[RMDB]
Chemical mapping of a 207-nucleotide RNA with 2A3 and DMS. For DMS the reverse transcriptase was MarathonRT. For 2A3, 4,938 sequencing reads were counted. For DMS, 5,192 sequencing reads were counted.
RNA sequence: GGGAACGACUCGAGUAGAGUCGAAAAGUCAACCAUCGGCCUCAUUGUCGGUAGCGCGCUGGCGCUUACUGGCAUCAUCGGUGCAAUUGGUCUUGUAGCCUGGCCGGUUAUCACCGGCAUCAAUGCCAUCAUCGCGGUAGCAGGCGCAAUGGGGGCAAGAUAGAUGUAGGUUCGCCUACAUCUAUCUAAAAGAAACAACAACAACAAC
Reactivity to 2A3 in 0.01 (KOAc 150mM, MgCl2 10mM, bicine 150mM(pH8.5), 24C), signal-to-noise 5, nucleotides 027 to 156: g060u030c040a050a090c290c020a080u070c040g060g020c000c040u110c060a070u040u070g020u050c010g020g020u020a010g020c010g000c020g040c260u240g220g010c010g000c010u080u120a010c000u010g020g000c000a010u030c010a030u090c040g020g000u020g040c010a070a090u030u030g050g010u020c020u020u060g090u080a060g030c010c020u010g040g010c010c010g030g000u100u120a120u140c070a010c030c010g000g000c000a000u100c050a010a080u060g000c010c000a010u020c010a020u170c050g000c010g040g020u040a030g030c060a030g110g030c010g000c030a000a030u030g010g000g000g010g000c030a030
Reactivity to DMS in 0.01 (KOAc 150mM, MgCl2 10mM, bicine 150mM(pH8.5), 24C), signal-to-noise 2, nucleotides 027 to 156: g020u000c020a060a200c160c020a050u010c080g040g030c300c070u000c090a090u010u000g040u000c010g020g000u000a030g000c000g020c030g030c210u010g010g040c020g000c010u000u000a010c010u000g000g020c010a030u010c130a070u010c140g020g020u000g010c090a070a130u000u000g000g000u000c040u000u010g010u000a120g000c030c050u000g030g010c000c010g040g030u000u000a060u030c150a160c000c010g000g000c030a060u000c080a050a140u000g000c010c020a060u000c030a080u000c070g000c040g040g050u000a150g000c100a080g020g010c030g010c030a060a020u010g000g010g010g020g030c090a080